[RMDB]
RNA sequence: GGGAACGACUCGAGUAGAGUCGAAAAAAAAGAUAUGGAUUGGAGGAUCCGAAGAACAAACUUUAAGCUAGUGUCGGAAACGACACUAGGAUACAAGUUUGGGAGGAUCUCCAAUCCUAAGUCAAAAGUAGUGAGUUUAGUUCGCUAAACUCACUACAAAAGAAACAACAACAACAAC
Reactivity to DMS in 0.01 (KOAc 150mM, MgCl2 10mM, bicine 150mM(pH8.5), 24C), signal-to-noise 1, nucleotides 027 to 126: a030a020a080a150g000a010u000a000u010g000g000a020u000u000g000g020a060g030g000a010u000c000c000g040a120a160g000a120a210c000a000a010a020c000u000u000u000a020a050g000c000u010a000g010u000g010u000c000g020g010a000a000a010c000g000a000c000a000c000u000a000g000g000a160u030a020c030a000a000g000u010u000u000g000g000g000a010g030g000a000u000c000u010c010c000a000a000u020c000c000u010a000a080g010u010c000a120a110a120a150

Structure probing data (DMS) for a 177-nucleotide construct. Reactivities are given for positions 27 through 126. The RNA was probed in 150 mM KOAc, 10 mM MgCl2 and 150 mM bicine (pH 8.5) at 24 C. For DMS the reverse transcriptase was MarathonRT.